The data come from the RNA Mapping Database (RMDB), library OK1LIB. An RNA of 177 nucleotides, treated with 2A3 and DMS and read out base by base. The 2A3 profile rests on 2,599 reads.

RNA sequence: GGGAACGACUCGAGUAGAGUCGAAAAACGUACGGUGUGGCCGUGAACCGUAUUUUGGACUUGAUGACGGAGAAGGGUCUACCACACAGUGCGACGCCCUUCAGUGCGGAGGAAUUGGCCGCACUACCGACGACUGACUAUUCGUAGUCAGUCGUCGAAAAGAAACAACAACAACAAC
Reactivity to 2A3 in 0.01 (KOAc 150mM, MgCl2 10mM, bicine 150mM(pH8.5), 24C), signal-to-noise 4, nucleotides 027 to 126: a010c010g000u010a000c000g000g000u020g010u000g030g040c010c030g220u060g050a090a020c020c010g000u010a150u040u130u020u100g150g060a060c050u080u170g150a080u170g030a130c060g000g040a060g100a110a080g090g020g000u100c160u230a020c000c000a000c000a010c020a030g030u000g000c000g020a010c090g050c000c000c000u030u130c090a000g000u000g010c000g010g040a070g030g160a300a210u130u220g140g000c000c000g000c000a000c000u010a040c010
Reactivity to DMS in 0.01 (KOAc 150mM, MgCl2 10mM, bicine 150mM(pH8.5), 24C), signal-to-noise 2, nucleotides 027 to 126: a180c030g000u000a030c030g000g020u000g010u000g030g000c030c060g000u020g040a200a270c000c010g000u000a050u000u040u000u050g020g000a120c170u020u000g000a090u040g000a050c050g000g000a120g000a260a140g000g000g000u050c090u060a300c080c010a000c010a040c000a050g000u000g010c000g010a100c240g000c000c010c000u010u050c130a010g030u000g030c000g000g000a030g010g020a170a230u050u010g000g020c030c000g030c040a000c000u000a000c300
The RNA was probed in 150 mM KOAc, 10 mM MgCl2 and 150 mM bicine (pH 8.5) at 24 C. The DMS profile rests on 2,671 reads.